[RMDB]
RNA sequence: GGGAACGACUCGAGUAGAGUCGAAAAUUUUCUGUCGCAGCAAAAGUCAUAAAAGGUGCUAAUAUGAUAUUAAUCGAUUUUCAAUAAAGCACAAGCCUGGACGCGCGAACUAGGCAAAUCGAACAAACAUUUGUCCUUGAUUCGUCAAGGACAAAUGAAAAGAAACAACAACAACAAC
Reactivity to DMS in 0.01 (KOAc 150mM, MgCl2 10mM, bicine 150mM(pH8.5), 24C), signal-to-noise 1, nucleotides 027 to 126: u030u000u010u000c010u000g030u000c020g030c070a050g060c050a110a080a100a170g000u010c090a040u000a060a050a080a100g020g020u000g000c000u010a070a050u000a040u000g000a120u000a090u000u010a100a080u040c070g000a030u000u000u000u000c060a020a040u000a070a040a040g010c020a030c050a150a040g010c010c010u000g040g050a060c090g010c090g000c010g000a040a170c030u000a030g020g040c000a000a040a030u010c010g020a040a170c200a080a070a130